The data come from the RNA Mapping Database (RMDB), library M2RFPK. This 207-nucleotide RNA was probed chemically with 2A3 and DMS.

RNA sequence: GGGAACGACUCGAGUAGAGUCGAAAAGUAUUCAUUCUCCUUUCUCGAUAGAGAUUGGAGUCAUACAACCCCAGAAACCAUUCCUUAUACCUUGAGUAUUGCUGAAAUCAGUUUAGCGUGCAUGCUCUUAAUGGGUGCACCUUCGGGUGCACCCAAAUAGAUCUUUACCUUUCGAGGUAAAGAUCUAAAAAGAAACAACAACAACAAC
Reactivity to 2A3 in 0.01 (KOAc 150mM, MgCl2 10mM, bicine 150mM(pH8.5), 24C), signal-to-noise 3, nucleotides 027 to 156: g010u020a050u070u100c080a050u130u030c020u020c010c010u020u000u000c030u000c000g220a270u110a300g010a000g010a010u000u000g010g010a000g000u020c000a010u020a030c040a030a090c020c000c000c010a060g150a070a080a040c080c020a110u110u150c020c010u190u130a100u110a300c040c040u080u110g000a010g030u040a030u190u080g020c030u070g050a060a110a140u180c070a100g050u100u100u180a070g060c060g020u070g040c010a000u010g000c000u020c000u040u110a150a070u090g000g000g000u000g010c000a010c000c000u050u080c250g040g000g020u000g000c000a000c000c000c000a000a000a000
Reactivity to DMS in 0.01 (KOAc 150mM, MgCl2 10mM, bicine 150mM(pH8.5), 24C), signal-to-noise 2, nucleotides 027 to 156: g000u000a040u000u000c010a090u000u000c000u010c000c000u000u000u000c020u000c000g000a300u020a200g040a020g010a030u000u000g010g000a030g020u000c290a040u000a040c020a080a260c070c000c000c050a140g000a110a090a100c030c030a160u000u000c020c010u000u000a100u000a030c030c020u000u000g010a090g000u000a050u000u000g040c050u000g000a080a070a130u000c080a100g010u000u000u000a100g010c110g030u000g000c030a050u000g000c010u000c010u000u000a060a190u020g010g010g020u000g000c000a010c000c000u000u000c300g060g030g050u010g000c000a000c000c010c000a000a010a050
2A3 adducts were read by reverse transcription with SuperScript II with manganese. The reactions ran in a buffer of 150 mM KOAc, 10 mM MgCl2 and 150 mM bicine (pH 8.5), at 24 C. The 2A3 profile rests on 1,339 reads.